[RMDB]
Notes: Structure probing data (2A3) for a 207-nucleotide construct. It was measured as part of the RMDB library PDB130. For 2A3 the reverse transcriptase was SuperScript II with manganese.
RNA sequence: GGGAACGACUCGAGUAGAGUCGAAAAUUGACACAUGAGGUAUAUACUUCUAGUCCAUAUUGGGGGGAGACUCCACGUCGAUUUAUCGAGUAAAAUUCUGUAUACAUAUUGAUAAUGACAAUAUGUACAUUUGUCUUGACUAAUUACGUGCCAGCAGGCUCUGAAGCAAGUUCGCUUGCUUCAGAGCAAAAGAAACAACAACAACAAC
Reactivity to 2A3 in 0.01 (KOAc 150mM, MgCl2 10mM, bicine 150mM(pH8.5), 24C), signal-to-noise 2, nucleotides 027 to 156: u050u030g030a020c020a010c030a130u070g010a010g000g100u050a130u070a070u150a260c000u000u040c020u030a020g020u000c030c010a040u120a120u200u230g010g000g000g000g000g000a070g020a010c010u000c020c020a010c030g070u070c070g000a000u050u010u050a030u040c020g000a000g020u090a000a050a010a060u190u080c050u060g090u070a050u000a060c000a000u000a010u000u040g050a070u060a300a110u160g060a000c000a000a000u000a000u010g000u020a020c010a040u040u020u080g100u000c020u000u010g000a030c010u020a010a010u020u010a000c010g000u030g000c010c010a010g000c000a020g130

Conditions: 150 mM KOAc, 10 mM MgCl2 and 150 mM bicine (pH 8.5), 24 C.